[RMDB]
RNA sequence: GGGAACGACUCGAGUAGAGUCGAAAACGACCUCCUGACGGGUCGGACAUAGCGUCAGGAUCAUCCGUGUCAGUCACCACGGUAAUCAUGUGUCUGAUGAUGGUUUUCCAUCUUAAUCUGACUGAGUCGUAGCAGUCUACAGUACUAUGACAUUAGACAUGCAGUAGGGUUUCGACCCUACUGCAUGAAAAGAAACAACAACAACAAC
Reactivity to 2A3 in 0.01 (KOAc 150mM, MgCl2 10mM, bicine 150mM(pH8.5), 24C), signal-to-noise 5, nucleotides 027 to 156: c020g010a000c000c000u010c000c000u010g010a000c000g000g000g000u010c070g050g050a080c100a110u180a040g140c000g020u010c000a000g000g020a020u110c060a020u030c000c000g000u000g030u040c010a020g010u000c000a000c010c000a000c010g010g060u080a040a020u080c080a050u050g010u000g000u000c000u020g030a050u060g000a000u000g030g110u120u120u160u160c000c000a000u000c000u040u150a150a110u100c130u140g000a000c000u000g010a000g000u000c010g010u010a000g000c010a010g000u010c150u120a100c060a080g050u040a070c000u010a000u040g010a000c000a010u020u150a090g040a020
Reactivity to DMS in 0.01 (KOAc 150mM, MgCl2 10mM, bicine 150mM(pH8.5), 24C), signal-to-noise 1, nucleotides 027 to 156: c030g030a300c000c020u010c010c020u000g010a070c000g000g040g010u020c000g010g020a060c050a050u000a100g030c040g040u010c030a030g020g010a060u000c080a070u000c020c030g000u020g000u020c020a110g000u010c000a150c270c000a020c030g000g030u000a020a030u010c120a110u000g040u000g020u010c040u000g020a080u000g020a050u000g020g010u000u020u040u000c040c000a070u000c050u000u000a090a120u000c080u010g020a070c040u020g020a140g000u000c030g000u010a000g020c020a080g060u000c060u010a150c130a090g000u000a020c000u000a010u000g000a010c000a230u000u010a100g000a200

Overview
The data come from the RNA Mapping Database (RMDB), library OK3TST. Structure probing data (2A3 and DMS) for a 207-nucleotide construct. The RNA was probed in 150 mM KOAc, 10 mM MgCl2 and 150 mM bicine (pH 8.5) at 24 C. DMS adducts were read by reverse transcription with MarathonRT.